[RMDB]
RNA sequence: GGGAACGACUCGAGUAGAGUCGAAAAGAAUCUUCCGCAAUGGGCGCAAGCCUGACGGAGCAAUGCCGCGUGCGGGAUGAAGCGUCUUGACGUGUAAACCGCUGUCAGGGGGUCGAACCAAUGAUUGCCCGUGAAAAGUAUUCGUACUUUUCACGGGAAAAGAAACAACAACAACAAC
Reactivity to 2A3 in 0.01 (KOAc 150mM, MgCl2 10mM, bicine 150mM(pH8.5), 24C), signal-to-noise 2, nucleotides 027 to 126: g080a030a080u070c030u110u050c020c000g000c050a000a130u170g020g020g000c000g050c040a110a020g000c030c000u040g020a020c000g010g020a030g050c070a060a120u200g050c060c060g060c020g080u110g020c010g010g030g010a060u300g010a030a000g000c000g040u050c030u150u220g110a030c010g050u080g000u070a020a020a010c020c010g000c030u060g070u110c060a040g000g020g000g000g000u040c020g010a060a030c010c010a030a040u110g080a060u110u210g050
Reactivity to DMS in 0.01 (KOAc 150mM, MgCl2 10mM, bicine 150mM(pH8.5), 24C), signal-to-noise 4, nucleotides 027 to 126: g000a100a110u000c110u020u000c020c010g000c150a090a070u020g000g000g040c000g000c200a050a110g000c000c000u010g000a060c040g010g010a030g020c120a080a100u060g010c000c040g000c060g030u010g000c010g020g020g000a040u050g010a220a300g000c000g000u010c030u030u000g000a000c000g000u000g020u000a000a300a300c050c000g000c000u000g000u020c080a120g020g000g020g000g000u000c000g010a040a240c060c010a120a130u030g020a130u000u030g020
About this RNA: Source: RMDB libraries RFM100 and RFMREP, as collected in RNAgym. Chemical mapping of a 177-nucleotide RNA with 2A3 and DMS. For 2A3 the reverse transcriptase was SuperScript II with manganese.